[RMDB]
RNA sequence: GGGAACGACUCGAGUAGAGUCGAAAAUUAGGUGACCUCGAAGCUAAAAUUGUUCAGAACGAGGUUUACCUUUCAGCAGAAAAGUAUCAUUAUAACGAAAUCAUUGAACAAUUUCAGCAAGAGUUAUGCAAGCAAAUAAAGUAUUUUGACUACAAGGUAUCGCUGUGAGAUUCGUCUCACAGCGAUAAAAAGAAACAACAACAACAAC
Reactivity to 2A3 in 0.01 (KOAc 150mM, MgCl2 10mM, bicine 150mM(pH8.5), 24C), signal-to-noise 2, nucleotides 027 to 156: u260u090a010g040g000u000g010a010c000c000u000c020g000a080a020g020c050u110a070a120a080a170u240u200g000u110u130c040a050g090a170a050c010g000a020g000g000u010u000u030a000c000c000u000u010u000c030a000g010c020a030g090a100a070a000a000g090u080a100u080c030a040u010u300a160u150a200a070c120g000a090a000a040u200c160a120u040u280g000a000a000c010a010a070u000u160u070c050a000g100c010a090a020g000a020g170u080u030a070u120g000c050a050a020g000c030a000a000a120u170a140a170a020g020u010a110u080u120u090u030g000a040c020u030a000c050a060a050g070g060